[RMDB]
RNA sequence: GGGAACGACUCGAGUAGAGUCGAAAAGCAUUGUAACUUCAAUAGGUAGUAAUUUGACUAUUGCAUGCAGAGUAUCGUUGAGACCUCCCACAACGGACACCGACGUCUUUUGGAUAAGUAAUGGUAUGUAUUACAAAGAAGAUGAUGGGGACGGAAACUAGGUUAUCCAAUUCGUUGGAUAACCUAGAAAAGAAACAACAACAACAAC
Reactivity to 2A3 in 0.01 (KOAc 150mM, MgCl2 10mM, bicine 150mM(pH8.5), 24C), signal-to-noise 5, nucleotides 027 to 156: g010c010a030u080u140g040u120a120a080c070u090u040c070a030a040u050a080g070g030u040a030g060u070a210a200u100u050u160g050a040c020u030a030u050u070g020c050a020u030g010c040a020g010a030g140u050a060u180c020g010u030u020g030a040g050a120c000c050u000c000c010c000a020c010a030a000c020g010g060a010c010a050c070c040g070a080c020g010u020c040u030u040u050u060g090g000a070u050a240a050g030u030a040a030u040g110g030u150a090u130g060u020a030u030u020a030c030a020a110a030g030a040a010g010a020u030g020a020u060g010g000g000g020a000c020g010g030a040a000a010
Reactivity to DMS in 0.01 (KOAc 150mM, MgCl2 10mM, bicine 150mM(pH8.5), 24C), signal-to-noise 4, nucleotides 027 to 156: g000c050a090u000u000g010u000a080a120c040u000u000c030a050a060u000a070g030g020u000a060g010u020a110a160u000u000u010g020a080c030u000a030u000u000g010c120a090u010g020c050a140g030a110g020u010a080u000c050g040u000u000g020a170g000a100c070c020u000c000c010c010a150c030a060a060c020g010g010a140c040a100c010c030g000a090c040g030u000c000u000u000u010u000g030g020a130u010a080a130g000u000a040a060u000g010g030u010a060u010g030u000a070u010u010a060c010a070a140a110g010a020a040g010a050u010g010a110u000g030g000g000g010a090c060g010g000a080a050a170